Record summary
An RNA of 177 nucleotides, treated with DMS and 2A3 and read out base by base. For DMS the reverse transcriptase was MarathonRT. The RNA was probed in 150 mM KOAc, 10 mM MgCl2 and 150 mM bicine (pH 8.5) at 24 C. Values are in units of 0.01, from 0 to 300, in steps of 10. It was measured as part of the RMDB library TTRDES.
RNA sequence: GGGAACGACUCGAGUAGAGUCGAAAAAAGAUAUGGAACCCAUCCGAAUACUACAGGGAGGCUCGUAAGGGUCGGAAACGACCUAUCGAGCCGAGGAUCUGUAGGGGUAGAUGGGUUCCUAAGUCAACAUAUUUUCGUAGUUCGCUACGAAAAUAUGAAAAGAAACAACAACAACAAC
Reactivity to DMS in 0.01 (KOAc 150mM, MgCl2 10mM, bicine 150mM(pH8.5), 24C), signal-to-noise 3, nucleotides 027 to 126: a120a080g000a030u000a040u010g000g000a000a000c000c000c000a020u000c020c020g000a110a050u010a030c000u000a000c000a020g000g000g000a000g060g020c000u000c000g010u000a090a250g000g000g010u000c000g020g000a000a010a020c010g010a010c000c000u010a070u010c000g010a020g040c000c000g010a020g000g000a010u010c000u000g010u000a000g000g000g000g000u000a060g000a010u000g000g000g000u000u000c000c000u000a000a060g000u000c000a150a280
Reactivity to 2A3 in 0.01 (KOAc 150mM, MgCl2 10mM, bicine 150mM(pH8.5), 24C), signal-to-noise 3, nucleotides 027 to 126: a000a000g020a000u020a010u060g000g000a010a000c020c010c020a010u110c130c020g120a150a090u060a160c000u000a020c000a010g000g010g000a010g000g000c000u010c000g070u070a300a300g070g000g000u000c000g000g000a000a010a010c000g000a000c000c000u020a070u030c000g000a000g000c000c000g010a000g000g000a000u000c010u000g000u010a010g010g000g060g060u050a010g000a000u010g010g000g010u000u000c000c000u000a000a000g000u000c000a030a060